RNA sequence: GGGAACGACUCGAGUAGAGUCGAAAAGAGACUACGAUAUUUUUGCAGAAACACAAGCACUAAUAUCGCACCGCAAGGAAGCGCCAUUCUCGCACGUCAACCGGAUCAACGAAACACUCACACGUGGGGUAAUAUCUCCUUUCGAGGAGAUAUUACCAAAAGAAACAACAACAACAAC
Reactivity to 2A3 in 0.01 (KOAc 150mM, MgCl2 10mM, bicine 150mM(pH8.5), 24C), signal-to-noise 3, nucleotides 027 to 126: g090a000g020a020c050u080a020c080g000a010u010a020u020u030u030u010u010g000c010a010g190a280a300a010c130a020c040a210a040g000c010a010c030u000a000a040u010a010u030c010g000c040a030c010c000g020c030a030a030g080g040a080a010g060c020g010c020c010a030u060u000c030u040c030g000c020a040c040g000u030c020a070a060c040c020g060g000a080u080c010a020a070c000g050a030a060a020c030a000c020u070c040a050c000a040c200g030u050g000g130
Reactivity to DMS in 0.01 (KOAc 150mM, MgCl2 10mM, bicine 150mM(pH8.5), 24C), signal-to-noise 4, nucleotides 027 to 126: g000a190g010a120c090u000a100c000g010a020u000a010u000u000u000u000u020g040c000a130g020a130a120a120c250a150c240a090a100g010c000a000c000u000a000a010u000a010u000c010g020c060a090c070c020g010c110a060a090g010g000a080a060g010c040g000c040c010a060u000u000c030u000c050g000c080a050c070g000u000c060a070a090c050c020g000g000a070u010c040a020a060c080g010a120a050a060c070a030c030u000c050a080c110a060c090g010u000g000g020